[RMDB]
RNA sequence: GGGAACGACUCGAGUAGAGUCGAAAACGGAAGCAUUAAAACCAUUCGAGCUACUCAAUGCGUGGCGUGUCUCUCCGCAGCGUGUUGGCGAAUGUAAAGAGUGACUAAGCAUGUAGUACCGAGGAUGAUAAGAGCAAUUCGUUCGCGAAUUGCUCAAGGUAAACUUAAACUUCGGUUUAAGUUUACCAAAAGAAACAACAACAACAAC
Reactivity to DMS in 0.01 (KOAc 150mM, MgCl2 10mM, bicine 150mM(pH8.5), 24C), signal-to-noise 4, nucleotides 027 to 156: c050g010g000a100a110g030c030a110u000u000a050a100a110a170c070c030a140u010u000c030g010a170g010c030u000a060c050u000c050a060a020u000g010c070g030u000g010g060c030g010u000g000u000c060u010c040u000c130c020g020c030a070g000c040g030u020g030u000u010g030g020c050g010a080a050u000g030u000a060a110a100g010a100g020u010g020a080c050u010a090a120g010c060a060u000g010u000a060g030u000a060c040c030g010a080g010g000a080u010g000a150u000a080a160g010a020g040c000a020a000u000u000c000g020u000u000c300g020c040g010a030a010u000u000g010c010u000c010a010a020
Reactivity to 2A3 in 0.01 (KOAc 150mM, MgCl2 10mM, bicine 150mM(pH8.5), 24C), signal-to-noise 9, nucleotides 027 to 156: c050g030g040a050a010g040c060a060u090u170a070a050a040a080c030c010a020u030u040c040g020a030g040c060u090a060c020u040c070a020a040u060g020c020g030u040g040g000c040g010u080g060u010c020u010c010u000c070c010g000c000a010g020c010g010u030g010u050u040g060g010c040g030a070a040u080g020u110a050a060a040g060a020g020u040g020a030c030u050a050a020g030c030a040u060g040u110a040g030u030a070c020c050g020a030g040g010a030u090g020a020u100a200a120g000a000g000c000a000a000u000u000c000g010u030u060c180g000c000g100a000a000u000u000g000c000u010c000a000a000